[RMDB]
RNA sequence: GGGAACGACUCGAGUAGAGUCGAAAACUGAUGACAGGUAAACGGGUGGCAACAGUACAGAAAGACGGACGAAGGGUGGAGUUUACGGCCACUUCCGUGUCUGACCUGAAAAAAUAUAUUGCAGAGCACAUAGUAGGCUUUUCGAAGCCUACUAUGUAAAAGAAACAACAACAACAAC
Reactivity to DMS in 0.01 (KOAc 150mM, MgCl2 10mM, bicine 150mM(pH8.5), 24C), signal-to-noise 5, nucleotides 027 to 126: c050u010g000a110u010g010a160c060a030g020g000u000a050a120a070c080g010g010g030u010g000g010c020a060a100c070a070g000u010a120c100a070g000a090a120a100g000a070c060g000g020a100c140g010a070a100g010g020g010u000g010g000a100g000u010u000u010a100c160g010g010c010c010a020c020u000u010c010c000g000u010g010u010c070u000g010a090c050c000u010g000a000a030a090a080a060a070u010a070u010a100u010u010g010c050a090g000a150g010c190
Reactivity to 2A3 in 0.01 (KOAc 150mM, MgCl2 10mM, bicine 150mM(pH8.5), 24C), signal-to-noise 3, nucleotides 027 to 126: c020u050g020a060u120g060a090c010a000g070g000u070a050a090a040c020g040g000g000u030g020g000c020a080a060c020a120g050u100a060c010a030g120a040a140a010g080a030c020g010g030a040c060g070a070a060g030g020g030u040g020g010a070g010u130u170u100a060c060g040g000c000c010a010c000u110u010c010c000g040u030g030u000c030u030g030a020c000c000u020g080a080a000a010a000a010a010u250a010u050a040u030u140g050c060a020g040a020g130c040
Chemical mapping of a 177-nucleotide RNA with DMS and 2A3. For DMS, 5,304 sequencing reads were counted. The 2A3 profile rests on 3,430 reads. 2A3 adducts were read by reverse transcription with SuperScript II with manganese. The RNA was probed in 150 mM KOAc, 10 mM MgCl2 and 150 mM bicine (pH 8.5) at 24 C. It was measured as part of the RMDB library OK2TST.